[RMDB]
RNA sequence: GGGAACGACUCGAGUAGAGUCGAAAAAUAAACCGGAACCGACGCAGCAAGCCCGACCGGAAGGGCAACCGGAACCCGGAUCUCAACCCGGUUGGGACGCACCUGAGAGACGGGAAUGCGUAAAAAACAUUCCAAUCCAGUUCGCUGGAUUGGAAUGAAAAGAAACAACAACAACAAC
Reactivity to DMS in 0.01 (KOAc 150mM, MgCl2 10mM, bicine 150mM(pH8.5), 24C), signal-to-noise 1, nucleotides 027 to 126: a040u010a030a070a080c010c000g010g030a160a180c300c100g020a020c060g000c030a060g000c060a120a180g000c000c000c000g000a100c000c000g030g000a130a070g010g010g010c010a060a040c000c000g020g020a100a160c020c030c010g010g000a120u000c000u000c000a020a170c240c010c000g000g010u000u000g040g000g000a060c050g000c160a070c170c020u000g020a080g030a160g000a150c110g020g000g010a040a050u000g020c000g020u000a000a010a090a080a030a020